The data come from the RNA Mapping Database (RMDB), library OK3TST. Chemical mapping of a 207-nucleotide RNA with 2A3.
RNA sequence: GGGAACGACUCGAGUAGAGUCGAAAAGCGUACAGGUGUAUAAGAUGUACUGGCAAUCUGCUAAAGGACUUAUACACAAGUACGAGUACUGGUAGUUGUAGGUUGACCUACAGCUACCAGUACAUGUACUAGGUUAUACCUAGUACUAGCCAGUACAUACAUGCAUCGACUUCGGUCGAUGCAUGUAAAAAGAAACAACAACAACAAC
Reactivity to 2A3 in 0.01 (KOAc 150mM, MgCl2 10mM, bicine 150mM(pH8.5), 24C), signal-to-noise 1, nucleotides 027 to 156: g080c000g000u020a000c030a170g160g140u000g000u010a000u000a000a040g060a110u020g020u050a010c000u000g010g000c030a050a220u170c240u140g050c080u260a040a000a190g100g000a050c000u020u010a000u030a000c000a000c030a040a000g020u000a000c030g010a000g000u010a000c000u010g000g000u000a000g020u020u000g000u000a010g100g030u000u260g300a300c000c000u000a000c000a020g000c040u000a000c000c000a000g000u000a000c000a000u040g000u000a000c000u000a000g000g010u160u070a090u090a220c020c010u000a000g000u010a000c000u000a000g000c020c010a020g000u000a020c000a020